[RMDB]
Description: Chemical mapping of a 207-nucleotide RNA with 2A3 and DMS. 2A3 adducts were read by reverse transcription with SuperScript II with manganese. Values cover nucleotides 27 to 156. DMS adducts were read by reverse transcription with MarathonRT. For 2A3, 581 sequencing reads were counted. High DMS reactivity at an A or C suggests that its Watson-Crick edge is free. Source: RMDB library OK3TST, as collected in RNAgym.
RNA sequence: GGGAACGACUCGAGUAGAGUCGAAAAGAAAUUGGAGUUGAUGUUCCCAGAAAACAACUGCCAAUUGAUAAUGGAACACAAGGAAGCAAGUCACUCAAAAGAGUACGAACACAACUGCGUAUUGAUGGUAUAAAUACUAAUGAUACUGAUAUUAAUAUACGAGUGAUUGUUUCGACAAUCACUCGUAAAAAGAAACAACAACAACAAC
Reactivity to 2A3 in 0.01 (KOAc 150mM, MgCl2 10mM, bicine 150mM(pH8.5), 24C), signal-to-noise 2, nucleotides 027 to 156: g060a000a130a000u020u010g000g000a000g010u000u000g060a140u120g020u040u020c000c000c000a000g090a000a150a000a010c000a010a030c020u080g190c030c000a070a000u030u090g020a070u050a220a120u120g080g020a150a000c060a010c020a100a060g000g050a030a000g110c020a090a040g080u070c050a000c060u110c090a080a160a000a020g020a010g000u080a060c060g020a180a000c020a010c030a120a110c030u150g000c020g100u050a080u030u050g060a090u090g000g010u080a040u050a090a090a010u060a070c040u090a040a110u070g040a020u060a060c010u000g050a010u070a070u290u140a070a130u220a020
Reactivity to DMS in 0.01 (KOAc 150mM, MgCl2 10mM, bicine 150mM(pH8.5), 24C), signal-to-noise 1, nucleotides 027 to 156: g000a000a020a010u020u000g040g010a140g000u000u000g050a160u000g030u000u000c000c030c070a300g030a040a100a110a150c010a010a040c000u000g040c000c020a070a090u010u000g040a060u000a020a150u000g010g000a140a100c080a040c100a110a000g050g050a110a170g060c110a070a130g070u000c030a040c010u050c040a020a090a030a080g000a030g030u000a100c000g030a060a150c010a120c100a060a180c090u000g050c010g030u000a100u000u000g000a020u000g030g030u000a040u010a040a060a140u000a070c000u020a030a170u010g000a100u010a090c010u010g000a120u000a120u000u000a060a170u030a250